Source information: Chemical mapping of a 177-nucleotide RNA with DMS and 2A3. The DMS profile rests on 5,191 reads. It was measured as part of the RMDB library OK2TRN.
[RMDB]
RNA sequence: GGGAACGACUCGAGUAGAGUCGAAAACGUAAUGCAUCGAUGCAUCGGCCGUAAUGCGCAUUAGCAUGCGCGCAUAUAUAUCGAUGCCGGCCGUAAUAUCGUAUAAUGCGCAUGCCGGCUAUAUACGGAUACAGAUCGGAUUCGUCCGAUCUGUAUCAAAAGAAACAACAACAACAAC
Reactivity to DMS in 0.01 (KOAc 150mM, MgCl2 10mM, bicine 150mM(pH8.5), 24C), signal-to-noise 5, nucleotides 027 to 126: c050g020u000a090a050u010g010c010a040u000c080g000a100u000g020c100a050u000c150g010g000c000c020g030u020a080a050u000g010c000g010c070a070u010u000a090g020c090a070u000g000c030g000c120g020c040a020u000a060u010a080u010a120u010c090g000a040u000g010c030c170g010g020c050c030g010u000a050a070u010a080u010c090g000u010a120u000a040a080u010g010c010g000c110a040u010g000c090c020g000g000c020u000a060u010a070u000a070c130g010
Reactivity to 2A3 in 0.01 (KOAc 150mM, MgCl2 10mM, bicine 150mM(pH8.5), 24C), signal-to-noise 4, nucleotides 027 to 126: c020g040u060a110a040u100g010c000a020u070c080g090a050u100g000c010a040u050c070g020g010c020c000g000u020a070a060u050g000c010g000c040a110u060u080a020g040c060a040u070g030c030g000c000g000c070a000u060a000u010a010u000a030u130c100g020a000u020g000c000c020g070g030c040c000g000u060a110a050u050a070u160c010g000u040a070u030a160a040u060g000c020g000c030a010u070g030c020c020g030g000c060u040a020u020a010u030a230c080g060

The 2A3 profile rests on 5,976 reads. For 2A3 the reverse transcriptase was SuperScript II with manganese.